An RNA of 177 nucleotides, treated with DMS and read out base by base. The RNA was probed in 150 mM KOAc, 10 mM MgCl2 and 150 mM bicine (pH 8.5) at 24 C. The DMS profile rests on 756 reads. Values cover nucleotides 27 to 126. The data come from the RNA Mapping Database (RMDB), library OK2TRN. For DMS the reverse transcriptase was MarathonRT.

[RMDB]
RNA sequence: GGGAACGACUCGAGUAGAGUCGAAAAGGGAAUUUGACCCAGACAUCACAUAUAAACUGCCAGCACUGGAAAUGUAUUACAAAGAGAUGUCGGAACUUGUUGGUAGAGAAGAGGUUUUGGAAAAAUACCCUACGAUUUUAUUCGUAAAAUCGUAGGGAAAAGAAACAACAACAACAAC
Reactivity to DMS in 0.01 (KOAc 150mM, MgCl2 10mM, bicine 150mM(pH8.5), 24C), signal-to-noise 2, nucleotides 027 to 126: g000g000g000a100a160u000u010u010g000a300c030c010c020a150g030a100c030a040u000c010a060c060a070u030a070u020a030a040a030c080u010g010c020c030a000g000c170a100c250u000g000g000a060a030a060u010g010u010a050u000u040a130c070a040a080a230g010a150g030a030u000g020u000c020g010g000a110a070c160u000u010g000u010u010g000g000u000a050g010a080g020a120a040g000a050g000g040u000u010u000u000g010g010a020a090a090a130a060u000a070